RNA sequence: GGGAACGACUCGAGUAGAGUCGAAAAUUGGAACCAAUUAAGGUUGGAACCGGUUCCAACCUUAAUUAAGGAAUUAAGGCCGGCCAAGGUUCCGGUUGGUUGGCCUUCCAAGGAAUUCCGGAAUUAAGCAUACCAGAAGAUUCGUCUUCUGGUAUGCAAAAGAAACAACAACAACAAC
Reactivity to DMS in 0.01 (KOAc 150mM, MgCl2 10mM, bicine 150mM(pH8.5), 24C), signal-to-noise 2, nucleotides 027 to 126: u010u020g010g010a040a130c030c020a020a020u000u000a010a020g000g030u000u000g000g000a040a070c200c300g000g010u010u010c000c000a010a010c000c010u000u000a000a000u000u000a150a110g000g010a120a110u010u030a050a040g010g010c010c010g000g000c010c010a000a060g000g020u000u000c020c010g010g000u010u000g010g020u000u000g000g020c000c000u010u000c010c020a070a060g000g010a050a070u010u000c010c000g010g010a030a020u000u000a070a200
Reactivity to 2A3 in 0.01 (KOAc 150mM, MgCl2 10mM, bicine 150mM(pH8.5), 24C), signal-to-noise 1, nucleotides 027 to 126: u060u050g040g010a050a020c000c000a010a010u010u020a000a010g000g000u000u000g010g010a090a060c230c240g260g100u100u040c000c000a000a000c000c000u000u000a010a000u020u020a080a050g000g020a040a010u150u080a130a020g010g010c000c010g000g000c010c000a020a000g040g010u040u020c030c000g000g000u010u020g000g020u000u000g000g000c010c020u010u000c010c010a060a040g160g070a030a050u240u010c030c000g050g040a010a010u120u090a150a050